[RMDB]
This 207-nucleotide RNA was probed chemically with 2A3. For 2A3, 757 sequencing reads were counted. The reactions ran in a buffer of 150 mM KOAc, 10 mM MgCl2 and 150 mM bicine (pH 8.5), at 24 C. Values are in units of 0.01, from 0 to 300, in steps of 10. 2A3 adducts were read by reverse transcription with SuperScript II with manganese. Reactivities are given for positions 27 through 156.
RNA sequence: GGGAACGACUCGAGUAGAGUCGAAAAGCAACAGCACGCUGACGGGCUGGGCAAGGGGGCCGCAAGGCCUCCCGGCUGCAAGGUUAUUCACGUCAGCUGGCCUCCUGCCGGGUACCUUGGCAUGGGGCGAGAUCCAAGGGUGCUGGCCUUCCUUGCAGUACCUAGAGGUGUUCGCACCUCUAGGUACAAAAGAAACAACAACAACAAC
Reactivity to 2A3 in 0.01 (KOAc 150mM, MgCl2 10mM, bicine 150mM(pH8.5), 24C), signal-to-noise 1, nucleotides 027 to 156: g030c040a000a090c000a040g060c000a000c000g050c000u000g000a000c000g000g000g000c010u010g000g050g040c000a030a050g000g010g000g010g010c000c000g000c050a020a000g000g000c020c000u020c000c000c000g010g020c010u080g080c000a040a080g060g000u250u200a140u160u290c100a050c090g000u000c000a000g030c000u000g000g000c000c000u020c000c010u000g040c000c000g050g010g090u210a190c040c030u080u210g020g020c010a020u000g020g000g000g010c010g000a010g010a000u040c110c100a020a050g180g030g000u010g000c030u040g000g000c000c040u010u000c000c020u000u120g010c020a010